The data come from the RNA Mapping Database (RMDB), library OK2TRN. This 177-nucleotide RNA was probed chemically with 2A3 and DMS. Values cover nucleotides 27 to 126. 2A3 adducts were read by reverse transcription with SuperScript II with manganese. As a SHAPE reagent, 2A3 marks flexible, mostly unpaired nucleotides at the ribose 2'-OH.
RNA sequence: GGGAACGACUCGAGUAGAGUCGAAAAUCUGGGGCCGGGGCAACGCUAUUUGUAAGUUAUCCCAAGGAAAUCGAAACAGACCCCUCCAUAGUUAAAGCUAUCCAUGCAACUAUCCACAAUAGCCAGGCGCAUCGUAAUAAUUCGUUAUUACGAUGCGAAAAGAAACAACAACAACAAC
Reactivity to 2A3 in 0.01 (KOAc 150mM, MgCl2 10mM, bicine 150mM(pH8.5), 24C), signal-to-noise 2, nucleotides 027 to 126: u000c020u040g020g020g000g050c050c040g040g020g020g010c020a040a050c010g000c000u050a080u170u240u140g100u070a080a080g000u030u060a020u030c020c000c030a010a050g080g010a030a100a040u170c080g030a120a060a000c020a020g070a160c030c000c010c000u010c000c000a050u030a070g050u110u160a180a030a000g000c000u020a060u050c040c020a000u130g060c000a000a040c000u040a010u040c030c020a060c000a080a040u040a100g050c030c010a010g060g000
Reactivity to DMS in 0.01 (KOAc 150mM, MgCl2 10mM, bicine 150mM(pH8.5), 24C), signal-to-noise 2, nucleotides 027 to 126: u010c060u000g010g010g010g020c060c040g010g010g000g010c080a050a050c070g010c070u010a080u010u010u010g020u000a070a070g020u000u000a130u000c020c010c010a100a140g000g010a050a060a060u000c090g010a090a090a070c050a100g000a130c040c030c030c000u010c030c030a070u000a040g000u000u000a030a090a130g000c000u010a060u010c050c110a060u000g010c040a050a030c030u000a040u000c050c040a050c080a060a050u010a080g010c020c090a070g000g010